[RMDB]
RNA sequence: GGGAACGACUCGAGUAGAGUCGAAAAUCGGCCUUGAGGACGACUUCAAAGAUACAAUUAGGGGAGAGGCGAACAAAUUGGCCAAGAGACUACAUGUCACCAGAUCCUAUAAACGGAUGAUGAAGACACCAUGGCGGCAGUUCGCUGCCGCCAUGGUAAAAGAAACAACAACAACAAC
Reactivity to 2A3 in 0.01 (KOAc 150mM, MgCl2 10mM, bicine 150mM(pH8.5), 24C), signal-to-noise 2, nucleotides 027 to 126: u000c020g030g000c060c000u070u050g010a190g030g000a000c030g020a060c060u000u080c110a140a040a030g130a010u080a210c080a180a160u270u180a200g000g000g070g000a020g000a010g000g190c000g030a000a000c000a000a300a070u020u050g000g040c000c000a090a020g170a000g000a040c000u030a050c030a150u300g010u050c000a070c030c000a030g020a060u000c000c000u030a020u140a120a070a000c000g010g000a000u000g000a080u140g020a030a090g030a040c050
This 177-nucleotide RNA was probed chemically with 2A3. 2A3 adducts were read by reverse transcription with SuperScript II with manganese.